[RMDB]
RNA sequence: GGGAACGACUCGAGUAGAGUCGAAAAUGCUAUUGUGAAGCCAUCCGGGACUGUUCACUCACUCAUUUAAGAAAGGUGUAUUUUCCACUUGAGGUGUGAGAGAAAGUGUGGUGUUCACUCAUUGCUCGUGUAUGGACCGAUUCGUCGGUCCAUACACAAAAGAAACAACAACAACAAC
Reactivity to DMS in 0.01 (KOAc 150mM, MgCl2 10mM, bicine 150mM(pH8.5), 24C), signal-to-noise 1, nucleotides 027 to 126: u010g010c270u000a070u010u030g030u010g030a030a200g000c010c020a010u010c180c050g010g010g010a170c040u000g010u000u000c010a070c000u010c050a140c010u000c000a040u010u000u000a070a070g030a030a000a070g010g040u000g000u010a120u000u000u000u000c050c060a100c010u000u000g000a030g000g020u000g000u010g030a000g000a010g000a050a100a090g000u010g010u000g030g030u020g010u000u000c010a010c020u020c110a030u000u000g010c000u000c150
Reactivity to 2A3 in 0.01 (KOAc 150mM, MgCl2 10mM, bicine 150mM(pH8.5), 24C), signal-to-noise 2, nucleotides 027 to 126: u110g010c000u020a020u110u170g020u010g000a000a010g000c000c000a000u060c100c020g130g030g050a020c020u060g170u130u020c000a000c030u010c000a150c000u040c010a240u080u070u160a080a090g040a080a110a040g000g030u130g020u180a210u070u120u030u000c020c010a030c030u020u000g000a020g010g000u020g000u000g000a000g000a010g000a000a030a060g000u030g020u040g040g040u060g300u030u030c010a000c000u000c020a030u090u110g000c000u020c090